[RMDB]
RNA sequence: GGGAACGACUCGAGUAGAGUCGAAAAGACGUUAUCUUCGGAUAACGUCAAAGAACGCUGAGCAGCAAAUAAAAAGCUGCGGAAGAGAGCGACAAAACCAAAAAAUCCGUUUCUUCGGAAACGGAAACACAAAUCUAAAGUUCGCUUUAGAUUUGUGAAAAGAAACAACAACAACAAC
Reactivity to DMS in 0.01 (KOAc 150mM, MgCl2 10mM, bicine 150mM(pH8.5), 24C), signal-to-noise 3, nucleotides 027 to 126: g020a030c000g000u000u000a020u000c000u010u020c230g010g020a000u010a010a010c000g000u000c000a030a080a150g010a150a120c040g010c010u010g020a120g000c000a020g030c010a030a090a160u010a060a110a210a140a160g020c000u000g010c020g010g000a150a120g000a140g010a020g020c010g010a140c090a040a080a070a160c040c050a010a020a100a060a130a130u020c000c000g000u000u000u000c000u000u000c200g010g000a010a000a000c000g000g000a000a040a110
Reactivity to 2A3 in 0.01 (KOAc 150mM, MgCl2 10mM, bicine 150mM(pH8.5), 24C), signal-to-noise 2, nucleotides 027 to 126: g000a000c010g000u020u010a000u020c020u050u050c210g060g000a000u010a000a000c000g000u000c000a010a000a010g010a100a020c030g020c030u040g070a010g020c000a000g000c010a010a150a100u190a080a220a030a030a020g000c010u000g000c010g010g000a110a010g150a010g020a010g010c000g020a030c050a020a100a020a040c030c000a030a020a020a020a000a070u010c000c000g010u010u000u010c020u020u080c180g090g000a000a010a000c000g000g000a000a010a000
Background:
Chemical mapping of a 177-nucleotide RNA with DMS and 2A3. It was measured as part of the RMDB library M2PK50. Reactivities are given for positions 27 through 126. For DMS the reverse transcriptase was MarathonRT. For 2A3 the reverse transcriptase was SuperScript II with manganese.